[RMDB]
RNA sequence: GGGAACGACUCGAGUAGAGUCGAAAACGUCACAAUGACCAUCGGCAGCAUUCAUGAAACUAACCCAGCCAAUUAUGUCGCGAAUGCUUAUGUGCUGCGGCACCCCUGCAACUGAACAUACGCUCGCCCACGUCGGCAGGUUCGCCUGCCGACGUGGAAAAGAAACAACAACAACAAC
Reactivity to 2A3 in 0.01 (KOAc 150mM, MgCl2 10mM, bicine 150mM(pH8.5), 24C), signal-to-noise 1, nucleotides 027 to 126: c000g060u010c020a000c060a040a190u190g050a050c050c000a000u080c010g030g000c030a000g030c000a060u070u160c030a070u230g230a050a010a050c050u060a000a060c090c000c000a000g020c000c000a160a010u280u060a060u180g140u220c020g000c020g100a210a030u190g000c020u000u010a070u110g120u160g000c000u000g000c000g040g000c000a080c040c000c000c000u000g120c100a140a000c060u160g020a000a000c000a030u160a010c020g040c050u080c050g000c040
Record summary
This 177-nucleotide RNA was probed chemically with 2A3. The RNA was probed in 150 mM KOAc, 10 mM MgCl2 and 150 mM bicine (pH 8.5) at 24 C. For 2A3 the reverse transcriptase was SuperScript II with manganese.